[RMDB]
RNA sequence: GGGAACGACUCGAGUAGAGUCGAAAAGCUGUUCUGUUCGCAGAACAGCAAAGGGAAGCAUCUCAAGCAUUUCAAGGUAGGGAGCACCAAGCAUAUCAAAAAAAACGGAUAAGUUCGCUUAUCCGAACCGCUAAACAUAGUUCGCUAUGUUUAGCGGAAAAGAAACAACAACAACAAC
Reactivity to 2A3 in 0.01 (KOAc 150mM, MgCl2 10mM, bicine 150mM(pH8.5), 24C), signal-to-noise 2, nucleotides 027 to 126: g000c010u010g000u010u000c000u020g070u020u080c220g060c070a000g000a000a000c000a000g040c000a000a070a030g060g000g020a070a030g000c030a160u030c070u030c120a050a100g050c030a070u120u170u070c080a130a060g110g000u050a030g030g050g030a030g010c010a020c080c010a020a020g000c020a060u130a050u240c140a110a010a010a000a010a000a010a060c000g000g010a000u010a010a010g010u020u060c220g010c090u010u000a000u000c000c000g020a030a030
Reactivity to DMS in 0.01 (KOAc 150mM, MgCl2 10mM, bicine 150mM(pH8.5), 24C), signal-to-noise 1, nucleotides 027 to 126: g000c010u000g020u010u020c000u020g020u020u010c170g110c050a000g000a030a030c000a010g040c000a010a060a090g000g020g000a050a080g040c080a070u000c060u030c070a130a110g020c040a100u000u020u000c160a040a050g010g000u010a120g020g000g010a060g000c040a040c000c030a000a100g000c140a070u030a040u010c050a000a000a000a100a010a070a080a200c020g000g000a000u000a000a010g000u000u000c220g010c000u010u000a010u010c000c000g000a060a060

Overview:
Chemical mapping of a 177-nucleotide RNA with 2A3 and DMS. The reactions ran in a buffer of 150 mM KOAc, 10 mM MgCl2 and 150 mM bicine (pH 8.5), at 24 C.